[RMDB]
RNA sequence: GGGAACGACUCGAGUAGAGUCGAAAAUGGAAAAGUACAAGGAUGAGCAAUUUUUUACUUUAGAAAUGUUUCAAAAGGGGAGGUAAACUUGAUGGUUAUCUGUCUGAAGGGUGACGCACUAUAGUGGCGUGGUAUUGAACUUCGGUUCAAUACCACGAAAAGAAACAACAACAACAAC
Reactivity to DMS in 0.01 (KOAc 150mM, MgCl2 10mM, bicine 150mM(pH8.5), 24C), signal-to-noise 1, nucleotides 027 to 126: u010g040g010a110a040a010a040g020u000a040c170a050a090g010g020a020u000g000a110g000c120a070a000u000u000u000u020u000u000a060c060u010u000u010a070g010a090a150a070u000g000u000u000u000c070a030a030a090a100g020g010g000g000a060g020g030u000a030a050a060c120u000u000g030a120u000g030g000u000u020a050u010c030u000g000u000c060u000g010a050a020g000g000g000u000g000a070c040g020c040a040c030u000a110u000a100g020u020g010g000
An RNA of 177 nucleotides, treated with DMS and read out base by base. DMS adducts were read by reverse transcription with MarathonRT. DMS (dimethyl sulfate) methylates the pairing face of unpaired adenines and cytosines. The data come from the RNA Mapping Database (RMDB), library OK2TRN.